[RMDB]
RNA sequence: GGGAACGACUCGAGUAGAGUCGAAAAUUUUCAAGGAACAGCCAGUAACCAAUGUUUAUCUACGUAAGUAAGGAAGGGAGAACAGUAGGAUGAGAGUUCAGAGAAGAGGGUAGGGGAUAUCAAAUAAACUAUACUUGGACUUCGGUCCAAGUAUAGUAAAAGAAACAACAACAACAAC
Reactivity to DMS in 0.01 (KOAc 150mM, MgCl2 10mM, bicine 150mM(pH8.5), 24C), signal-to-noise 1, nucleotides 027 to 126: u000u020u000u010c050a060a160g020g000a080a100c040a100g010c050c050a050g030u000a070a140c120c060a100a050u010g000u010u000u000a080u020c060u030a100c030g000u010a060a120g030u000a050a100g000g000a080a070g020g010g010a120g000a050a050c060a040g020u010a040g020g020a090u000g010a200g020a090g010u000u010c100a060g000a080g000a050a050g000a100g030g000g000u010a080g050g010g000g000a060u010a010u020c050a060a070a070u000a020a100
An RNA of 177 nucleotides, treated with DMS and read out base by base. The data come from the RNA Mapping Database (RMDB), library OK2TST. For DMS the reverse transcriptase was MarathonRT.